[RMDB]
An RNA of 177 nucleotides, treated with DMS and 2A3 and read out base by base. The 2A3 profile rests on 1,694 reads. The reactions ran in a buffer of 150 mM KOAc, 10 mM MgCl2 and 150 mM bicine (pH 8.5), at 24 C. High DMS reactivity at an A or C suggests that its Watson-Crick edge is free.

RNA sequence: GGGAACGACUCGAGUAGAGUCGAAAAGGUUUUACUCCUUGAACCCUUCGGAAGAACUCUUUGGAGUUCGUACCAGUACCUCACAUAGUGAGGUAAUAAGACUGGUGGGCAGCGCCUAGUCGAAAGAUCUAUAGAGAGGGUUCGCCCUCUCUAUAGAAAAAGAAACAACAACAACAAC
Reactivity to DMS in 0.01 (KOAc 150mM, MgCl2 10mM, bicine 150mM(pH8.5), 24C), signal-to-noise 5, nucleotides 027 to 126: g010g000u010u010u020u010a120c190u000c010c010u000u000g000a140a150c010c000c010u000u010c130g010g010a200a150g020a010a010c000u000c000u000u010u020g040g000a010g020u000u000c000g010u010a080c010c010a150g020u000a020c000c000u000c000a010c020a180u000a170g020u000g010a010g000g010u000a010a020u000a060a120g010a100c010u000g010g000u000g010g000g030c110a100g000c080g000c040c020u000a030g010u000c010g000a050a080a120g010a090
Reactivity to 2A3 in 0.01 (KOAc 150mM, MgCl2 10mM, bicine 150mM(pH8.5), 24C), signal-to-noise 2, nucleotides 027 to 126: g030g000u000u050u180u230a070c060u030c020c000u000u000g080a130a120c000c000c000u070u140c080g040g000a030a020g000a010a000c000u000c000u060u160u300g100g020a010g030u000u000c000g000u000a030c010c000a010g040u000a000c000c000u000c020a000c020a130u140a070g020u000g000a000g000g010u010a000a010u080a030a010g050a010c010u000g000g050u050g030g070g120c060a140g090c000g010c040c020u040a020g010u000c010g010a060a030a010g080a090